[RMDB]
RNA sequence: GGGAACGACUCGAGUAGAGUCGAAAAACAGUUGGGGCUGUGGCAGCCUCCCAGCCAGUUCUCUCCUUUUCUCCAGGUGGGUCUGGUGAGCUGGGGUCUUUACAACCCCUGCCUUGGCUCUGCUGACAAAAACUCCCGCAAAAGGGCCCCUCGUAGCGAGGUAGCUAAUAUUCGUAUUAGCUACCUCAAAAGAAACAACAACAACAAC
Reactivity to 2A3 in 0.01 (KOAc 150mM, MgCl2 10mM, bicine 150mM(pH8.5), 24C), signal-to-noise 1, nucleotides 027 to 156: a000c010a020g050u140u130g140g010g000g000c000u030g000u030g030g040c010a000g070c000c040u000c000c000c000a010g010c030c000a060g080u290u060c000u000c020u050c030c000u070u130u090u100c110u110c040c030a000g040g000u030g010g000g000u000c000u000g080g000u090g060a040g030c010u000g000g010g010g030u040c050u080u300u120a060c040a120a060c000c010c000c030u020g000c000c000u110u140g000g000c000u000c040u020g000c000u040g010a060c130a010a140a010a080a140c100u130c080c000c050g040c010a080a100a010a040g000g000g030c030c060c060c000u040c020g070u100a060g090c030
An RNA of 207 nucleotides, treated with 2A3 and read out base by base.
2A3 is a SHAPE reagent: it acylates the 2'-hydroxyl of flexible nucleotides of all four kinds.
The data come from the RNA Mapping Database (RMDB), library OK3TST.
Conditions: 150 mM KOAc, 10 mM MgCl2 and 150 mM bicine (pH 8.5), 24 C.